[RMDB]
RNA sequence: GGGAACGACUCGAGUAGAGUCGAAAAGUAGUAUGAAAAAGCCGACGAACAGUGGUUGCUCAGACACAAUCCCUGGUCAAGCUGGUCGGGCUAAGGGCCUGAGGCCUGUAAGAACGGUAGCAUCUCUUCCUUGUCCUUGGUCUAGGUGCGCAACCCAUAUAUGAGUUUGAUUCGUCAAACUCAUAUAAAAAGAAACAACAACAACAAC
Reactivity to 2A3 in 0.01 (KOAc 150mM, MgCl2 10mM, bicine 150mM(pH8.5), 24C), signal-to-noise 3, nucleotides 027 to 156: g030u070a010g000u030a070u220g140a110a070a040a070a050g040c040c030g040a070c020g010a170a030c040a040g020u060g040g040u020u020g020c020u030c050a040g030a100c020a000c030a150a100u050c000c010c010u000g040g000u030c060a070a030g010c040u050g060g000u040c010g030g000g010c000u040a090a150g080g000g010c020c030u080g020a050g020g010c000c010u030g050u050a050a060g040a110a000c020g030g020u070a010g030c040a060u020c010u000c000u040u060c010c000u040u050g160u100c030c020u040u020g010g000u010c010u040a020g000g050u040g000c030g000c040a050a050c010c000c010a010
Reactivity to DMS in 0.01 (KOAc 150mM, MgCl2 10mM, bicine 150mM(pH8.5), 24C), signal-to-noise 2, nucleotides 027 to 156: g030u000a080g020u010a070u000g010a150a130a130a140a130g030c010c010g010a150c020g000a060a050c020a080g050u000g030g030u000u000g020c020u000c030a240g000a180c070a050c030a060a070u000c020c030c000u020g020g000u010c020a070a070g040c050u000g010g020u000c030g020g020g000c030u000a070a130g000g010g000c000c010u000g010a100g020g000c010c000u010g020u000a060a120g020a080a090c050g020g020u020a100g030c040a110u000c030u000c030u000u000c000c030u000u010g000u000c020c080u000u010g030g030u000c020u000a060g030g020u010g010c030g020c040a050a090c020c020c010a230
Chemical mapping of a 207-nucleotide RNA with 2A3 and DMS. The reactions ran in a buffer of 150 mM KOAc, 10 mM MgCl2 and 150 mM bicine (pH 8.5), at 24 C.